An RNA of 207 nucleotides, treated with 2A3 and read out base by base.

RNA sequence: GGGAACGACUCGAGUAGAGUCGAAAAAUUGGCGCCAGGCGCUCCGCUACCUUGCCCUAAACGAAGAUCGAAAGUUUCGAUCAAAACACGUGGCCGGCAGGUGGUUGGAGUUGCAGUUCGGUUGGUUACCACUAAUGAGUGAUAUCCAGGGUGCAUAGACUUGAUAGUCGUUCGCGACUAUCAAGUCAAAAGAAACAACAACAACAAC
Reactivity to 2A3 in 0.01 (KOAc 150mM, MgCl2 10mM, bicine 150mM(pH8.5), 24C), signal-to-noise 1, nucleotides 027 to 156: a000u110u160g050g030c000g000c000c040a110g120g000c030g000c000u010c000c000g000c000u000a010c010c000u010u280g010c010c040c070u080a010a010a010c020g000a050a010g000a000u020c000g020a040a210a130g160u160u250u140c000g000a020u010c000a050a100a120a000c090a000c040g000u020g010g000c020c000g000g000c000a000g000g020u000g000g020u090u300g000g000a000g000u030u270g000c000a000g100u060u140c030g060g020u110u020g040g000u000u000a000c020c000a020c050u090a140a150u280g200a060g060u030g000a040u000a000u000c010c010a030g020g000g020u000g000c020a020u050a120

For 2A3 the reverse transcriptase was SuperScript II with manganese.